Chemical mapping of a 177-nucleotide RNA with DMS and 2A3. For DMS the reverse transcriptase was MarathonRT. The reactions ran in a buffer of 150 mM KOAc, 10 mM MgCl2 and 150 mM bicine (pH 8.5), at 24 C.
RNA sequence: GGGAACGACUCGAGUAGAGUCGAAAACAAUCAACCACCUUUAUGGCGCCGACGGGACAGUUAUCCUCACAUAGCUCACAGGCCACACAGAUGUCCUGAUUUACAUCAAGGUGGCUGUAAAUAACCAACCACUCACGUAGUUCGCUACGUGAGUGGUAAAAGAAACAACAACAACAAC
Reactivity to DMS in 0.01 (KOAc 150mM, MgCl2 10mM, bicine 150mM(pH8.5), 24C), signal-to-noise 1, nucleotides 027 to 126: c240a010a060u030c150a000a140c010c000a010c080c000u020u000u000a040u000g050g010c000g030c060c050g010a070c020g040g000g010a050c020a080g020u000u000a170u000c000c000u050c050a050c100a220u000a120g010c020u000c050a020c120a050g030g010c080c010a010c030a160c220a110g000a070u000g050u000c050c060u080g020a050u000u020u000a140c000a000u000c060a220a120g010g000u000g000g000c000u010g000u000a020a120a100u000a070a080c150c000a160
Reactivity to 2A3 in 0.01 (KOAc 150mM, MgCl2 10mM, bicine 150mM(pH8.5), 24C), signal-to-noise 3, nucleotides 027 to 126: c060a000a060u200c010a010a040c010c000a010c000c000u010u140u020a070u080g120g000c070g060c030c030g070a110c050g010g000g010a030c000a070g010u080u140a010u080c010c030u050c000a100c020a100u110a020g010c010u010c050a050c000a020g090g000c000c000a010c010a000c000a010g040a100u030g030u040c000c010u050g050a160u090u050u300a020c020a010u020c030a000a050g090g000u000g020g000c000u000g010u000a030a110a050u130a060a030c010c000a000